[RMDB]
RNA sequence: GGGAACGACUCGAGUAGAGUCGAAAAGUGUGGGUAGGGGCGGCUUAGCGAAUUAGGGCGUUCUGCCCCAGUGGCACCAUUACCCUAUGCAAAGUCUGCAUCAGGCGGGGUAGUGUGCUGCUCGGGCCCCAGAAUUAUAGUUCGCUAUAAUUCUGGGAAAAGAAACAACAACAACAAC
Reactivity to DMS in 0.01 (KOAc 150mM, MgCl2 10mM, bicine 150mM(pH8.5), 24C), signal-to-noise 2, nucleotides 027 to 126: g010u000g020u000g000g010g000u000a110g000g000g000g040c060g020g000c100u010u010a080g030c060g000a060a090u010u000a080g000g010g000c060g000u000u010c060u010g020c000c000c000c070a010g030u000g000g000c000a020c100c100a020u020u000a030c010c000c000u010a040u020g020c050a060a130a130g000u000c090u000g010c100a110u010c160a050g000g020c080g010g010g000g010u000a010g020u010g020u000g000c010u000g000c010u010c300g000g000g010c030
Reactivity to 2A3 in 0.01 (KOAc 150mM, MgCl2 10mM, bicine 150mM(pH8.5), 24C), signal-to-noise 1, nucleotides 027 to 126: g070u040g030u070g060g020g100u100a130g070g020g010g050c070g080g010c100u030u120a020g010c030g140a130a100u140u060a120g000g010g040c030g020u070u040c030u040g000c020c000c010c010a010g010u000g000g000c000a000c010c000a010u030u010a010c000c020c020u040a040u050g040c020a000a090a210g090u020c040u050g000c050a120u080c050a180g090g090c080g050g000g000g000u010a010g030u000g010u010g000c000u010g000c000u000c030g030g010g010c060

The record gives the reactivity of an RNA of 177 nucleotides to DMS and 2A3.
Values cover nucleotides 27 to 126.
The reactions ran in a buffer of 150 mM KOAc, 10 mM MgCl2 and 150 mM bicine (pH 8.5), at 24 C.
DMS (dimethyl sulfate) methylates the pairing face of unpaired adenines and cytosines.
It was measured as part of the RMDB library VIROID.